[RMDB]
RNA sequence: GGGAACGACUCGAGUAGAGUCGAAAAAAGCCGAAGCUCUACGGCUCCGAGGUCCCCCGGAUCUACACCCCGGAGCGGCGCGAGCUGACCCGGGAAACGUCCAAGGGUUUCGAGUGCAUCGAGUUCGCCGAGCAGGUCCUCGACAUCCAGCUUUUCCAUAAUCAAUAUGGUUCGCCAUAUUGAUUAUAAAAGAAACAACAACAACAAC
Reactivity to DMS in 0.01 (KOAc 150mM, MgCl2 10mM, bicine 150mM(pH8.5), 24C), signal-to-noise 2, nucleotides 027 to 156: a030a070g000c040c010g010a110a090g000c030u000c010u000a110c110g010g000c000u000c020c010g020a140g020g000u000c000c030c060c020c040g040g020a050u010c040u010a070c060a160c150c010c000c000g040g020a040g030c020g020g050c000g010c240g000a190g000c000u010g000a030c030c010c010g000g000g000a030a030a050c110g010u020c030c040a130a110g020g000g030u000u000u000c000g000a140g020u000g030c090a140u000c080g020a120g040u000u000c050g030c020c030g020a080g010c050a130g000g010u010c090c020u000c000g010a030c040a120u020c020c040a140g020c050u000u000u000u000c050c060
Reactivity to 2A3 in 0.01 (KOAc 150mM, MgCl2 10mM, bicine 150mM(pH8.5), 24C), signal-to-noise 2, nucleotides 027 to 156: a000a010g030c030c010g060a100a020g040c020u020c030u090a040c040g030g010c000u030c080c040g020a040g020g040u100c020c000c000c020c050g030g000a010u020c010u060a020c030a060c080c010c000c040g000g000a040g070c020g010g010c050g010c070g000a050g000c050u080g030a140c000c010c020g040g000g000a040a060a030c080g010u040c060c020a050a100g020g000g000u000u040u070c050g020a040g010u090g050c030a020u030c000g040a050g040u100u090c070g030c090c020g020a030g010c070a040g010g030u050c020c000u010c040g030a020c020a090u020c030c030a020g040c050u070u020u040u010c040c010
Structure probing data (DMS and 2A3) for a 207-nucleotide construct.
For 2A3, 1,826 sequencing reads were counted.
For DMS the reverse transcriptase was MarathonRT.
It was measured as part of the RMDB library OK3TST.
Values cover nucleotides 27 to 156.